RNA sequence: GGGAACGACUCGAGUAGAGUCGAAAAGAUAUGGACCAAUCAUUACCAGCCGAAGAACUCGGAAACGAGGGAGGCUGAAUGAGUUGGUCCUAAGUCAAACUCCCUAAUUGUUCGCAAUUAGGGAGAACAUCUGGAUGGUCUUCGGACCAUCCAGAUGAAAAGAAACAACAACAACAAC
Reactivity to 2A3 in 0.01 (KOAc 150mM, MgCl2 10mM, bicine 150mM(pH8.5), 24C), signal-to-noise 1, nucleotides 027 to 126: g020a050u090a030u130g020g000a020c000c000a010a000u010c030a000u010u040a240c170c000a000g000c010c010g130a300a060g040a030a000c000u010c000g090g000a140a020a000c000g010a000g000g020g010a000g000g060c010u010g060a000a000u070g030a100g300u040u000g000g000u060c010c000u020a010a010g020u000c030a040a020a110c000u000c000c000c000u000a020a000u010u020g040u090u090c300g000c200a000a000u000u000a030g030g020g010a000g010a000a000
Reactivity to DMS in 0.01 (KOAc 150mM, MgCl2 10mM, bicine 150mM(pH8.5), 24C), signal-to-noise 1, nucleotides 027 to 126: g020a030u020a300u000g000g020a040c010c030a000a020u010c000a020u000u000a120c300c000a040g060c010c000g000a090a150g000a100a250c000u000c000g010g000a110a120a180c000g000a010g000g010g010a130g000g020c000u000g020a020a000u020g000a010g020u000u010g000g010u010c000c000u060a000a090g000u010c060a070a060a190c000u000c000c010c000u000a000a020u000u000g000u000u010c250g020c000a000a000u000u000a000g020g000g020a000g020a020a060
An RNA of 177 nucleotides, treated with 2A3 and DMS and read out base by base.
The data come from the RNA Mapping Database (RMDB), library TTRDEL.
The reactions ran in a buffer of 150 mM KOAc, 10 mM MgCl2 and 150 mM bicine (pH 8.5), at 24 C.